[RMDB]
RNA sequence: GGGAACGACUCGAGUAGAGUCGAAAAGGGAAUAAUUGAAUUGACAAAUAGGGUUAUGAUUAGGUUAUGAUAGAAACUCUCUAGCCCAGCCUGACACAAGUAGAUCACAAAACAUCUUUAUUCUAACACUGAUGGUAGGAAAGCAUCUCCCAGGGAAGCUAAAUAUACCCUUCGGGGUAUAUUUAGCAAAAGAAACAACAACAACAAC
Reactivity to DMS in 0.01 (KOAc 150mM, MgCl2 10mM, bicine 150mM(pH8.5), 24C), signal-to-noise 1, nucleotides 027 to 156: g000g000g000a070a030u000a040a100u000u020g000a140a140u000u000g010a190c030a090a040a110u000a070g020g040g000u010u000a050u020g010a100u010u000a060g000g000u000u000a070u000g000a180u060a110g000a120a110a120c030u050c090u020c000u000a110g030c020c040c030a120g000c030c020u020g110a030c040a030c070a060a130g000u020a020g030a100u000c000a090c060a040a100a110a150c070a050u000c030u000u000u000a060u040u000c090u000a070a050c070a080c040u010g000a110u010g020g020u000a030g010g020a090a060a090g010c040a110u000c040u020c000c010c040a110g030g040g000a110a190
Reactivity to 2A3 in 0.01 (KOAc 150mM, MgCl2 10mM, bicine 150mM(pH8.5), 24C), signal-to-noise 3, nucleotides 027 to 156: g060g000g020a040a060u060a040a060u120u120g070a050a080u100u030g030a040c070a040a110a050u130a130g050g000g010u090u070a100u170g060a060u110u120a030g030g010u090u060a050u150g050a060u040a180g070a060a030a030c030u080c000u000c030u060a020g000c000c000c010a010g010c030c020u000g020a010c000a010c000a080a020g020u040a030g060a060u060c050a010c040a110a140a050a060c020a020u060c030u020u100u070a080u110u040c050u060a090a050c050a020c060u050g020a020u060g080g040u070a050g010g070a070a080a000g010c010a020u020c030u020c010c000c020a020g160g010g040a080a000
The record gives the reactivity of an RNA of 207 nucleotides to DMS and 2A3. 2A3 adducts were read by reverse transcription with SuperScript II with manganese. For DMS, 1,766 sequencing reads were counted. For 2A3, 1,897 sequencing reads were counted. For DMS the reverse transcriptase was MarathonRT.